Structure probing data (2A3 and DMS) for a 207-nucleotide construct. Reactivities are rounded to 0.1 and cut off at 0 and 3. The 2A3 profile rests on 979 reads. For DMS the reverse transcriptase was MarathonRT.
[RMDB]
RNA sequence: GGGAACGACUCGAGUAGAGUCGAAAAUCCUGUUAACAGGACAUACGCCGGGACGUGGGACGGAACUUUCAAAUGGGCGUGGAGCAACAACCCGGCCUGGGUUCUUUACGACCUGAUCAUGAAUCAGCGUUAUGGGUUAGACCAGCGCGAGUUAGGGAUUCAUAACUGCAUUCGUGCAGUUAUGAAUAAAAGAAACAACAACAACAAC
Reactivity to 2A3 in 0.01 (KOAc 150mM, MgCl2 10mM, bicine 150mM(pH8.5), 24C), signal-to-noise 2, nucleotides 027 to 156: u040c030c000u020g030u070u190a160a150c030a050g020g030a030c010a110u170a050c020g020c040c000g000g000g000a030c030g020u010g000g020g030a030c070g030g050a060a070c060u040u190u070c160a150a110a090u170g000g030g000c030g030u110g000g040a050g050c060a040a050c000a000a040c020c000c000g010g010c020c050u030g010g010g000u060u050c000u070u090u110a080c050g040a100c000c000u060g020a040u090c070a190u190g250a300a020u090c040a040g000c020g040u020u130a080u140g100g000g000u040u180a030g040a110c030c000a010g000c000g020c010g010a000g000u040u070a050g060g040g050
Reactivity to DMS in 0.01 (KOAc 150mM, MgCl2 10mM, bicine 150mM(pH8.5), 24C), signal-to-noise 2, nucleotides 027 to 156: u000c010c000u000g030u030u000a110a140c060a040g050g020a110c060a130u000a060c060g040c040c020g000g000g000a120c040g010u000g010g000g020a110c030g010g020a090a090c070u000u000u000c040a040a140a110u020g010g010g040c000g000u000g000g020a060g010c190a100a080c050a070a140c020c000c010g040g030c090c070u000g000g000g010u000u000c010u000u000u000a050c050g000a080c030c010u000g020a040u020c030a100u020g000a060a070u020c050a160g020c080g030u000u000a070u000g030g000g010u010u010a100g000a180c030c010a110g010c050g000c010g010a100g000u010u000a120g020g000g000